[RMDB]
RNA sequence: GGGAACGACUCGAGUAGAGUCGAAAAUUAUUCGAGGAGCUGUUGGUUCAGGAAAGUCUACAGGUUUACCAGCGUAUUUAUGUCAAUCUGGAUCUAUUUUGAUUCUCGAACCGACACGACCGCUGGCAUAACAACCUCAGUUCGCUGAGGUUGUUAUAAAAGAAACAACAACAACAAC
Reactivity to DMS in 0.01 (KOAc 150mM, MgCl2 10mM, bicine 150mM(pH8.5), 24C), signal-to-noise 2, nucleotides 027 to 126: u020u010a070u000u010c040g010a050g010g000a110g000c100u010g020u000u010g020g010u010u010c040a050g000g000a040a040a120g020u000c020u000a070c110a080g020g010u000u010u000a140c020c020a050g010c120g000u020a080u020u020u010a090u020g000u000c020a090a100u000c030u000g010g000a050u000c020u000a170u000u000u010u000g010a080u000u010c010u010c110g020a010a040c100c160g000a030c000a040c090g000a110c210c030g000c010u000g010g010c300
Reactivity to 2A3 in 0.01 (KOAc 150mM, MgCl2 10mM, bicine 150mM(pH8.5), 24C), signal-to-noise 1, nucleotides 027 to 126: u050u030a050u020u070c000g040a010g030g000a030g070c050u030g050u170u100g040g060u060u000c000a000g050g030a130a090a020g020u000c010u040a040c050a130g040g000u050u090u100a020c010c000a040g000c060g030u090a150u030u200u040a100u090g010u020c030a000a040u050c010u030g000g050a050u050c000u030a150u150u140u060u150g060a090u050u000c010u030c030g050a030a030c050c000g000a030c000a000c030g060a000c030c020g020c050u000g020g060c040

Structure probing data (DMS and 2A3) for a 177-nucleotide construct.
Values cover nucleotides 27 to 126.